[RMDB]
RNA sequence: GGGAACGACUCGAGUAGAGUCGAAAAGUAAAUAAUGCGCACCAAGAUGGAGGUGCGCAACCAGCGUGUCCAUGGAUCACGCAUCCACGCGUCUACCAAGACGCGAAUGGUAAUACAAAUAAAAAAACAUGAGUGAAUAGUUCGCUAUUCACUCAUGAAAAGAAACAACAACAACAAC
Reactivity to 2A3 in 0.01 (KOAc 150mM, MgCl2 10mM, bicine 150mM(pH8.5), 24C), signal-to-noise 5, nucleotides 027 to 126: g050u060a030a090a140u180a110a070u100g000c010g000c000a000c000c020a040a030g150a150u260g080g060a090g020g000u000g000c000g010c000a000a010c010c000a030g000c010g010u020g010u000c060c050a160u180g110g010a060u140c010a000c010g000c010a030u030c000c010a020c000g000c000g010u000c000u020a160c030c040a050a020g000a010c000g000c000g000a010a060u040g000g000u030a050a020u120a100c070a010a100a030u210a080a130a020a000a000a010a010
Reactivity to DMS in 0.01 (KOAc 150mM, MgCl2 10mM, bicine 150mM(pH8.5), 24C), signal-to-noise 4, nucleotides 027 to 126: g010u020a090a100a110u000a100a180u000g020c000g000c000a000c010c000a130a190g020a210u000g020g010a190g000g010u000g010c020g020c000a020a010c100c040a110g010c020g000u000g000u000c030c080a120u010g020g030a060u020c030a000c030g000c020a080u010c040c050a090c030g010c000g010u000c000u010a180c300c300a080a040g000a000c000g000c020g000a020a030u010g000g000u000a050a060u010a050c180a030a070a060u080a020a000a040a070a070a060a090